The record gives the reactivity of an RNA of 177 nucleotides to 2A3 and DMS. Source: RMDB library OK2TRN, as collected in RNAgym. The 2A3 profile rests on 1,158 reads. The DMS profile rests on 2,420 reads. DMS (dimethyl sulfate) methylates the pairing face of unpaired adenines and cytosines. For 2A3 the reverse transcriptase was SuperScript II with manganese. DMS adducts were read by reverse transcription with MarathonRT. Reactivities are given for positions 27 through 126.
RNA sequence: GGGAACGACUCGAGUAGAGUCGAAAAGAUGUGUGUUUUUCGUGCGCAUGUUAUGCAUAUGUACAUCUGUGAGUGCGUGCAUAUAAAUAUGAAUGAUGGAGUCCAUCGUUGGAGGUAAAGAGAGGAGAGCGUCGAUUAUAUUCGUAUAAUCGACGCUAAAAGAAACAACAACAACAAC
Reactivity to 2A3 in 0.01 (KOAc 150mM, MgCl2 10mM, bicine 150mM(pH8.5), 24C), signal-to-noise 1, nucleotides 027 to 126: g080a030u040g020u030g030u000g120u060u070u040u100u220c060g030u040g000c030g000c010a010u060g070u020u030a060u060g030c000a040u000a010u230g010u030a030c020a170u120c080u120g120u050g140a040g040u020g020c020g000u000g000c030a000u050a020u000a120a110a030u160a060u100g060a050a020u050g040a070u030g010g030a040g140u000c020c000a030u010c000g010u010u030g020g000a010g060g000u070a100a080a010g060a000g020a050g080g040a040g000
Reactivity to DMS in 0.01 (KOAc 150mM, MgCl2 10mM, bicine 150mM(pH8.5), 24C), signal-to-noise 2, nucleotides 027 to 126: g000a090u020g000u000g020u010g010u000u000u000u000u000c120g010u000g010c080g010c030a030u000g010u020u010a030u000g010c030a020u000a050u010g030u010a040c050a070u000c090u020g020u010g010a100g020u010g000c030g010u000g000c020a010u000a050u000a060a070a070u010a080u000g010a080a050u010g000a060u000g000g010a170g020u020c030c040a030u010c040g010u020u000g000g020a060g020g000u020a040a080a070g010a060g000a050g010g000a060g020